[RMDB]
RNA sequence: GGGAACGACUCGAGUAGAGUCGAAAAGGCGUGUCGACCUGCGACCCGGGGACGCAGGAGCGAAACCAUAGCAAAUCGACGAAUGUCCACACAGUCGGUCGAAGAGAGAACCGGGCGGUCGUCGGCACCUGCACCCAUUAUUCGUAAUGGGUGCAGGAAAAGAAACAACAACAACAAC
Reactivity to 2A3 in 0.01 (KOAc 150mM, MgCl2 10mM, bicine 150mM(pH8.5), 24C), signal-to-noise 2, nucleotides 027 to 126: g050g110c160g000u030g010u020c010g000a010c000c020u120g130c020g080a300c000c010c000g000g030g000g010a020c040g030c030a020g080g030a100g100c050g050a140a010a070c030c010a060u070a040g000c020a000a040a110u020c000g000a000c000g020a050a050u060g040u130c150c010a020c000a010c000a180g060u030c010g010g090u030c010g080a120a010g090a010g020a000g010a100a040c010c000g000g000g050c010g100g190u080c000g010u000c000g000g010c010a010
Reactivity to DMS in 0.01 (KOAc 150mM, MgCl2 10mM, bicine 150mM(pH8.5), 24C), signal-to-noise 2, nucleotides 027 to 126: g000g040c110g030u000g030u000c000g000a100c020c030u000g020c020g020a110c020c000c010g010g000g000g000a250c050g000c060a080g000g000a070g000c040g030a200a060a110c120c080a050u020a120g010c080a040a170a100u000c000g040a000c010g000a040a010u010g000u010c050c270a220c160a100c050a060g010u000c000g010g000u000c010g010a110a090g000a200g020a040g000a250a240c000c020g000g010g000c000g020g000u000c170g020u000c030g000g000c030a030

An RNA of 177 nucleotides, treated with 2A3 and DMS and read out base by base. The data come from the RNA Mapping Database (RMDB), library OK2TST. Values cover nucleotides 27 to 126.